[RMDB]
RNA sequence: GGGAACGACUCGAGUAGAGUCGAAAACGCUGGGACAAGCAGUGUCUGUGAACAGCGAACUACCUGAAGCGCGCACGGGCGCUGGGAGACACGCUUGUCCUGUGCUGAAGCGCGCACGGCAACCGAAAGGUGCGAGAGUAGGGGUUCGCCCCUACAACUUUCUCUGAGCUUUCGAGCUCAGAGAAAGAAAAGAAACAACAACAACAAC
Reactivity to 2A3 in 0.01 (KOAc 150mM, MgCl2 10mM, bicine 150mM(pH8.5), 24C), signal-to-noise 1, nucleotides 027 to 156: c050g020c040u160g000g010g010a000c000a000a020g040c300a250g020u010g000u000c000u020g300u020g050a000a000c000a000g020c000g030a100a080c050u130a080c100c040u060g100a140a070g000c000g000c010g000c000a050c130g060g000g000c010g000c010u000g000g000g010a070g010a000c000a000c010g000c000u010u000g000u000c000c000u000g000u030g010c020u060g060a130a030g010c000g000c000g000c010a000c030g030g000c040a060a060c010c000g050a070a010a050g010g000u020g000c020g040a060g010a000g060u000a000g010g010g000g000u040u060c110g080c000c000c020c000u000a000c000a000a000
The record gives the reactivity of an RNA of 207 nucleotides to 2A3. For 2A3, 1,519 sequencing reads were counted. Values cover nucleotides 27 to 156.